An RNA of 207 nucleotides, treated with 2A3 and DMS and read out base by base. Reactivities are given for positions 27 through 156. For DMS the reverse transcriptase was MarathonRT. The RNA was probed in 150 mM KOAc, 10 mM MgCl2 and 150 mM bicine (pH 8.5) at 24 C.
RNA sequence: GGGAACGACUCGAGUAGAGUCGAAAAAGACCACCUCUACGGAGGUGGUCAAGUCACGUAGCUAGUACCAGGUUGCAAUACUAGAGCGUUAGUCCUAGGGCGUACGGUGGCAGUACGCUGCCACCGAUAAAACUUGAAUACUUCGGUAUUCAAGUAAGUUGUACUAGAUCUUCGGAUCUAGUACAACAAAAGAAACAACAACAACAAC
Reactivity to 2A3 in 0.01 (KOAc 150mM, MgCl2 10mM, bicine 150mM(pH8.5), 24C), signal-to-noise 1, nucleotides 027 to 156: a010g000a000c010c000a000c000c000u030c010u000a060c240g070g000a000g000g000u000g000g000u000c000a000a000g020u000c000a000c000g020u010a050g030c000u020a030g010u010a130c080c070a040g050g140u190u150g050c010a020a010u020a010c020u000a050g020a010g020c020g010u040u160a030g030u030c000c040u060a070g000g000g060c080g060u160a050c020g030g010u010g010g020c000a020g000u050a020c300g010c040u000g000c000c000a000c000c000g000a000u010a000a050a000a000c000u000u000g000a000a010u000a000c000u000u020c130g110g010u000a010u000u000c000a000a000g000u000a020a020
Reactivity to DMS in 0.01 (KOAc 150mM, MgCl2 10mM, bicine 150mM(pH8.5), 24C), signal-to-noise 1, nucleotides 027 to 156: a160g020a060c010c000a000c010c000u000c000u010a180c300g060g000a040g010g040u010g040g020u000c000a010a050g000u020c100a080c080g050u010a190g060c000u000a030g000u000a070c070c020a180g020g000u000u000g030c050a120a090u000a040c020u000a010g000a260g000c040g000u000u010a040g010u030c000c040u000a050g000g010g010c070g040u000a110c040g010g030u010g020g000c020a090g030u000a100c270g000c040u020g030c010c000a010c000c020g000a080u000a010a050a050a030c000u000u010g010a030a020u000a000c000u010u010c300g020g020u000a000u010u000c010a030a000g010u000a000a030